Source: RMDB library RFM100, as collected in RNAgym. Structure probing data (DMS and 2A3) for a 177-nucleotide construct. The reactions ran in a buffer of 150 mM KOAc, 10 mM MgCl2 and 150 mM bicine (pH 8.5), at 24 C. Reactivities are given for positions 27 through 126. For 2A3 the reverse transcriptase was SuperScript II with manganese. For 2A3, 3,979 sequencing reads were counted.
RNA sequence: GGGAACGACUCGAGUAGAGUCGAAAACAGGGUCUGCGCUGCGCCGCGGAGCCCCGGCUGCCCACGUAGAGGCGGCGGCCGUCUCGGGGCCCCUGCGUGCGGGGCGCCCACUGCGGCCGCCAAGAGCACAUCUAAAUUUCUUCGGAAAUUUAGAUGUAAAAGAAACAACAACAACAAC
Reactivity to DMS in 0.01 (KOAc 150mM, MgCl2 10mM, bicine 150mM(pH8.5), 24C), signal-to-noise 3, nucleotides 027 to 126: c020a120g000g000g020u000c010u000g000c020g020c030u040g000c140g010c150c030g010c010g030g000a070g000c030c000c000c030g010g000c050u020g020c010c000c010a140c150g000u030a110g000a070g010g020c180g010g020c010g000g000c010c000g040u010c150u010c230g030g000g030g010c030c000c000c020u000g010c060g000u000g010c040g030g000g010g050c110g010c000c010c030a020c060u000g000c060g020g020c000c010g060c000c000a020a130g000a120g010c090
Reactivity to 2A3 in 0.01 (KOAc 150mM, MgCl2 10mM, bicine 150mM(pH8.5), 24C), signal-to-noise 2, nucleotides 027 to 126: c040a020g000g020g000u030c020u050g010c000g020c030u250g080c050g050c130c020g000c010g020g040a120g060c020c000c000c000g010g010c020u070g000c000c020c000a040c070g090u120a060g050a090g170g060c030g000g000c000g000g000c000c000g030u030c050u070c060g000g000g000g000c020c000c000c010u080g010c050g110u100g050c040g000g020g000g000c060g060c010c010c000a050c030u040g000c000g000g000c000c000g030c010c000a030a000g020a010g010c040